[RMDB]
RNA sequence: GGGAACGACUCGAGUAGAGUCGAAAAGAUAUGGAUUGCGUAGAUCAUCGAUCUUACUGUGUCGGAAACGACAUUAAGGGAGAUCUACGCAAUCCUAAGUCAAAACACUUGGGUUCGCCCAAGUGAACGUACUAGAGAUGUUCGCAUCUCUAGUACGAAAAGAAACAACAACAACAAC
Reactivity to 2A3 in 0.01 (KOAc 150mM, MgCl2 10mM, bicine 150mM(pH8.5), 24C), signal-to-noise 5, nucleotides 027 to 126: g020a000u020a010u070g000g000a000u010u010g010c000g010u000a000g000a020u030c020a060u300c050g020a010u000c010u020u020a050c120u110g000u000g000u050c010g010g010a020a010a020c000g010a000c000a010u030u030a000a000g020g010g000a060g000a010u000c000u000a000c010g000c000a000a000u000c000c000u000a000a000g000u000c000a000a000a050a070c010a000c010u010u000g050g020g000u120u100c300g160c020c000c000a000a000g000u000g000a050a020
Reactivity to DMS in 0.01 (KOAc 150mM, MgCl2 10mM, bicine 150mM(pH8.5), 24C), signal-to-noise 4, nucleotides 027 to 126: g000a010u000a090u020g000g000a010u000u000g010c000g020u000a000g010a010u000c000a300u010c220g010a020u010c000u000u000a010c300u010g010u000g010u000c000g010g010a020a020a050c000g020a010c000a000u000u000a010a000g000g000g010a000g010a010u000c010u000a010c000g000c000a000a000u000c000c000u000a000a050g000u000c000a110a100a150a270c010a010c000u020u000g010g000g040u000u020c300g000c000c000c000a000a010g010u000g000a040a090